RNA sequence: GGGAACGACUCGAGUAGAGUCGAAAAGAUAUGGAGUGGAAGAAGAGCGAUAAGACCCUCGGAAACGAGAGGUCUUUUGACGCUUGUAAACACUCCUAAGUCAAAGGGAGAUGUUCGCAUCUCCCAACCUGACUUUUAACUUCGGUUAAAAGUCAGGAAAAGAAACAACAACAACAAC
Reactivity to 2A3 in 0.01 (KOAc 150mM, MgCl2 10mM, bicine 150mM(pH8.5), 24C), signal-to-noise 1, nucleotides 027 to 126: g030a020u060a040u180g020g000a010g010u030g000g050a190a240g000a020a010g000a210g000c000g040a020u010a080a010g010a000c000c020c000u000c010g020g060a100a060a030c010g020a000g040a060g000g000u020c000u010u000u000u020g020a000c000g000c010u020u030g000u030a000a020a000c000a010c010u000c000c000u000a150a010g050u040c040a070a070a090g020g010g000a030g000a000u020g000u090u210c300g040c130a000u000c030u030c000c000c000a000a010
Reactivity to DMS in 0.01 (KOAc 150mM, MgCl2 10mM, bicine 150mM(pH8.5), 24C), signal-to-noise 3, nucleotides 027 to 126: g000a050u010a300u000g000g010a000g000u010g040g000a020a220g010a180a300g020a030g010c000g060a130u000a010a020g000a000c000c000c000u000c000g020g010a150a090a130c000g000a010g030a080g010g020u000c000u000u000u000u000g010a140c140g000c000u000u000g000u000a000a040a300c000a010c000u000c000c000u000a010a130g010u000c050a050a110a130g000g000g010a040g010a020u000g010u000u010c160g000c010a010u000c030u000c000c000c020a010a030
Structure probing data (2A3 and DMS) for a 177-nucleotide construct. It was measured as part of the RMDB library TTRDEL. For DMS the reverse transcriptase was MarathonRT. 2A3 adducts were read by reverse transcription with SuperScript II with manganese. The reactions ran in a buffer of 150 mM KOAc, 10 mM MgCl2 and 150 mM bicine (pH 8.5), at 24 C.